[RMDB]
RNA sequence: GGGAACGACUCGAGUAGAGUCGAAAAGAAUCAGAUGCGGGAUUACCAGGCCAAUAAAGCCGAUAAUGCCGCUUACCGAUACGGCAGCACCAACGAGCAGUGAGCUCACUAACAGUAAUUGCUGGCGUCGCCAGCCAGUGUUCGCACUGGCUGGCGAAAAAGAAACAACAACAACAAC
Reactivity to DMS in 0.01 (KOAc 150mM, MgCl2 10mM, bicine 150mM(pH8.5), 24C), signal-to-noise 1, nucleotides 027 to 126: g000a140a040u000c040a000g020a120u010g000c000g040g030g000a000u000u000a000c020c000a290g060g010c020c050a040a190u000a130a180a190g010c040c000g040a010u000a000a000u000g000c000c010g000c000u000u000a070c110c090g000a020u040a060c010g020g000c050a000g000c030a060c280c070a030a070c250g030a040g000c020a210g010u020g000a110g000c070u000c000a080c120u000a030a110c250a110g030u000a040a060u000u000g000c000u000g000g000c050g030
Reactivity to 2A3 in 0.01 (KOAc 150mM, MgCl2 10mM, bicine 150mM(pH8.5), 24C), signal-to-noise 1, nucleotides 027 to 126: g000a010a050u120c100a010g030a110u130g000c010g030g080g040a000u020u000a010c060c040a250g000g030c000c010a100a120u130a260a130a020g000c030c000g000a000u010a000a010u030g180c000c010g000c000u010u010a040c010c040g020a030u010a090c050g020g030c010a000g010c020a010c040c040a060a120c050g020a040g030c030a070g100u060g240a030g050c020u040c020a040c060u090a140a030c020a040g090u120a160a100u100u070g020c000u030g150g000c000g090
This 177-nucleotide RNA was probed chemically with DMS and 2A3. The RNA was probed in 150 mM KOAc, 10 mM MgCl2 and 150 mM bicine (pH 8.5) at 24 C. Values cover nucleotides 27 to 126.